[RMDB]
RNA sequence: GGGAACGACUCGAGUAGAGUCGAAAACAGCCGGCCCGAGGAGCGGCCCACCUUCGAGUUCCUGCAGUCGGUGCUGGAGGACUUCUACACGGCCACCGAGCGGCAGUACGAGCUGCAGCCCUAGCCGAGUCGAUUUAAUAUUCGUAUUAAAUCGACUAAAAGAAACAACAACAACAAC
Reactivity to DMS in 0.01 (KOAc 150mM, MgCl2 10mM, bicine 150mM(pH8.5), 24C), signal-to-noise 7, nucleotides 027 to 126: c060a090g000c020c020g010g010c020c010c020g010a130g020g010a090g020c070g010g010c010c010c070a070c170c170u000u010c110g010a060g010u010u010c020c010u000g000c040a050g010u010c110g010g010u000g010c010u000g000g000a060g000g000a050c040u000u000c040u000a070c130a170c160g010g000c010c020a070c040c020g010a190g010c100g010g000c030a080g000u010a130c150g010a130g020c000u010g010c030a100g000c020c010c010u000a090g010c060c060g000
Reactivity to 2A3 in 0.01 (KOAc 150mM, MgCl2 10mM, bicine 150mM(pH8.5), 24C), signal-to-noise 5, nucleotides 027 to 126: c000a000g010c010c000g060g000c000c000c000g010a050g040g020a040g190c160g020g010c020c020c010a070c010c000u110u160c080g070a030g030u140u120c010c000u070g110c010a020g040u080c060g200g010u160g020c000u010g020g120a020g010g010a010c000u080u000c010u100a060c100a020c100g020g000c010c010a020c010c020g020a020g020c110g020g000c000a010g060u080a040c060g020a050g040c000u000g010c010a050g010c000c000c020u040a030g020c030c020g030